The record gives the reactivity of an RNA of 207 nucleotides to 2A3. The data come from the RNA Mapping Database (RMDB), library PDB130. 2A3 adducts were read by reverse transcription with SuperScript II with manganese. Conditions: 150 mM KOAc, 10 mM MgCl2 and 150 mM bicine (pH 8.5), 24 C.
RNA sequence: GGGAACGACUCGAGUAGAGUCGAAAAUCCCAUACUAAUUAAUCCCAUUAUCUACACUACCCUUAUCAUAACAGUAAUGUCCGGAACCAUACUAGUAAUAAUCAGCUCACACUGACUACUCAUCUGAAUCGGAUUCGAAAUAAACCUAUUAGCAAUACUAAGCUAUUGCCUUCGGGCAAUAGCUUAGAAAAGAAACAACAACAACAAC
Reactivity to 2A3 in 0.01 (KOAc 150mM, MgCl2 10mM, bicine 150mM(pH8.5), 24C), signal-to-noise 1, nucleotides 027 to 156: u000c000c010c020a000u070a000c080u090a000a300u300u030a100a040u050c000c030c000a120u140u110a000u080c180u160a100c050a010c080u010a010c000c010c030u020u020a000u000c000a000u050a100a050c010a020g000u110a090a000u080g160u080c000c000g050g060a050a000c000c000a070u090a070c030u140a000g110u100a080a000u010a040a070u030c010a030g000c030u060c060a030c000a000c030u000g070a000c000u000a030c010u030c040a100u040c060u080g010a060a080u030c040g030g000a000u030u040c040g070a060a060a000u070a000a030a170c070c020u010a080u210u030a070g000c000a010a010u000a080